[RMDB]
Overview: An RNA of 207 nucleotides, treated with 2A3 and DMS and read out base by base. For DMS the reverse transcriptase was MarathonRT. Conditions: 150 mM KOAc, 10 mM MgCl2 and 150 mM bicine (pH 8.5), 24 C. For 2A3, 5,294 sequencing reads were counted. Reactivities are given for positions 27 through 156.
RNA sequence: GGGAACGACUCGAGUAGAGUCGAAAAGCAUCGAAGACGGUCCUGCCAUGAGACCGUAACGAGGACAUGUCGCCUCGAAUGGCGUCGGGGAGCCGGCAGCUUACCCCAAGGAUGAGCGCCUAAUGCCUAUACCCGAUUCGCUUCGGCGAAUCGGGAAUGAUAAACACAGUUUCGACUGUGUUUAUCAAAAAGAAACAACAACAACAAC
Reactivity to 2A3 in 0.01 (KOAc 150mM, MgCl2 10mM, bicine 150mM(pH8.5), 24C), signal-to-noise 6, nucleotides 027 to 156: g030c020a030u080c060g080a090a000g120a020c010g000g000u000c010c020u080g150c070c050a180u130g020a080g000a100c000c000g010u010a010a030c010g010a010g000g020a020c040a120u220g030u120c090g000c010c000u010c010g010a060a080u090g020g010c000g010u060c040g000g000g010g000a010g050c030c020g060g000c040a030g010c020u040u180a230c010c010c000c020a000a040g110g010a120u130g030a030g030c020g010c000c020u080a120a040u100g020c000c010u090a090u120a150c000c000c000g000a000u000u000c010g000c000u020u020c090g110g000c000g000a000a000u000c000g000g010g000a000a000
Reactivity to DMS in 0.01 (KOAc 150mM, MgCl2 10mM, bicine 150mM(pH8.5), 24C), signal-to-noise 2, nucleotides 027 to 156: g040c050a130u000c040g000a120a140g000a080c010g010g010u000c010c010u000g040c080c240a150u000g020a070g010a050c010c000g020u000a010a150c030g000a080g010g000a160c050a160u010g000u000c020g010c010c000u010c040g010a110a080u010g010g000c030g020u000c020g000g000g000g000a130g040c050c040g020g000c060a060g010c000u010u000a080c010c010c030c080a080a160g020g020a100u000g000a050g010c030g000c020c010u000a070a060u000g010c010c000u000a130u000a140c000c010c010g010a010u010u010c010g040c010u000u000c300g040g010c000g030a010a000u000c010g020g000g000a000a010